[RMDB]
RNA sequence: GGGAACGACUCGAGUAGAGUCGAAAAGAUAUGGACCAAUUACGCACAAUCCAUGGAUUCUUUGAUCGUGUGGAUCGGAAACGAUCCCACGGGAGAAUUAUGGAUUGUGCGUAAUUGGUCCUAAGUCCAUAAUAUGAAGGUUCGCCUUCAUAUUAUGAAAAGAAACAACAACAACAAC
Reactivity to DMS in 0.01 (KOAc 150mM, MgCl2 10mM, bicine 150mM(pH8.5), 24C), signal-to-noise 4, nucleotides 027 to 126: g000a100u000a300u010g000g000a010c010c000a020a010u000u000a000c000g010c010a020c000a010a010u000c000c000a010u000g020g020a010u000u000c000u000u000u010g010a090u000c000g030u000g000u010g040g000a010u000c000g010g000a120a120a230c010g000a010u000c000c000c000a000c000g000g000g000a010g000a020a010u000u010a020u000g000g010a010u000u000g010u000g000c000g000u000a000a010u000u000g010g010u010c000c000u000a000a070g000u010c040
Structure probing data (DMS) for a 177-nucleotide construct. Conditions: 150 mM KOAc, 10 mM MgCl2 and 150 mM bicine (pH 8.5), 24 C. Source: RMDB library TTRINS, as collected in RNAgym. The DMS profile rests on 16,785 reads.